[RMDB]
RNA sequence: GGGAACGACUCGAGUAGAGUCGAAAAAGUGCCUUACGAGGCACAGCUGCAGAGGUGCCAGCUGCAGUGGGGGAGGCACUGCCAGGGCUGCCCACUCUGCUUAGCCAGCAGGUGCCAAGAACAGGAAUCCGCAUAAUUCAUUCGUGAAUUAUGCGGAAAAAGAAACAACAACAACAAC
Reactivity to 2A3 in 0.01 (KOAc 150mM, MgCl2 10mM, bicine 150mM(pH8.5), 24C), signal-to-noise 4, nucleotides 027 to 126: a000g020u020g030c010c000u070u050a110c260g070a030g010g000c000a000c000a020g050c010u040g000c030a020g040a060g090g020u040g020c030c010a030g000c020u010g000c000a000g000u020g000g000g000g020g010a070g000g020c000a030c080u060g070c060c070a100g070g080g000c050u040g010c010c010c000a080c000u050c000u000g030c000u030u100a030g050c070c010a010g000c030a040g000g040u010g020c010c010a050a040g050a050a020c030a020g100g030a040a080
Reactivity to DMS in 0.01 (KOAc 150mM, MgCl2 10mM, bicine 150mM(pH8.5), 24C), signal-to-noise 3, nucleotides 027 to 126: a070g010u000g000c000c000u000u020a100c090g040a050g020g000c000a010c000a020g010c000u020g010c060a040g020a300g010g030u010g000c000c000a070g030c020u010g020c020a000g030u000g000g000g000g010g000a300g050g000c000a050c130u020g000c090c110a120g010g010g010c210u000g000c040c000c130a220c010u000c020u000g000c030u000u020a100g000c130c070a080g000c030a060g000g020u000g000c020c000a050a190g010a100a130c070a020g000g020a060a180